Annotation: This 177-nucleotide RNA was probed chemically with DMS.

RNA sequence: GGGAACGACUCGAGUAGAGUCGAAAAAGUUAUUAGCUGGCAUAGAGGAAACACCCUUAAACAGUGAGGGGUACAAUUGAUAGUUCCAUAGAAUGUUUCACAAGGGGGAUGAGCGAUCAAUGUGAAGCACGUGUCCAGGAUUCGUCCUGGACACGUGAAAAGAAACAACAACAACAAC
Reactivity to DMS in 0.01 (KOAc 150mM, MgCl2 10mM, bicine 150mM(pH8.5), 24C), signal-to-noise 1, nucleotides 027 to 126: a050g010u000u010a000u000u000a130g070c030u000g030g030c000a110u010a030g050a050g030g010a100a110a110c150a100c030c050c030u010u000a180a110a070c260a060g010u000g000a070g010g000g010g000u010a030c150a020a100u010u000g000a030u030a080g000u000u000c010c170a120u010a060g020a080a100u000g020u000u000u010c050a050c080a030a010g060g000g000g000g000a160u000g000a030g000c070g000a070u010c030a030a080u000g010u000g000a020a030g000